The record gives the reactivity of an RNA of 207 nucleotides to 2A3. The 2A3 profile rests on 783 reads. The RNA was probed in 150 mM KOAc, 10 mM MgCl2 and 150 mM bicine (pH 8.5) at 24 C.

RNA sequence: GGGAACGACUCGAGUAGAGUCGAAAACGAAGCUUCGGCUUCGGAAACCCGUAGGAAUCGGUGGUAUAGGGAGAUAGUUUCGUUCGAAAGAGCGAACUAUCGACGAUCUAUACGUAACAUCCGAUUCCUAAACGGACUAAUUGUUCUUCGGAACAAAGGAAGAGAUUCGUUUCGACGAAUCUCUUCCAAAAGAAACAACAACAACAAC
Reactivity to 2A3 in 0.01 (KOAc 150mM, MgCl2 10mM, bicine 150mM(pH8.5), 24C), signal-to-noise 1, nucleotides 027 to 156: c000g000a000a000g060c010u070u180c300g110g020c000u000u000c000g040g020a080a020a040c000c000c000g000u010a000g010g000a000a020u010c000g000g000u020g000g010u000a000u020a030g040g020g000a000g060a060u060a000g020u050u160u250c060g000u010u000c010g000a110a030a030g000a000g000c000g000a010a000c000u000a000u000c000g000a010c000g010a000u000c000u010a000u000a000c060g010u030a030a060c030a180u110c000c020g000a000u000u000c000c000u000a020a020a020c060g040g090a010c060u230a210a000u120u050g020u060u000c030u080u140c210g110g010a020a020c040a060a060a130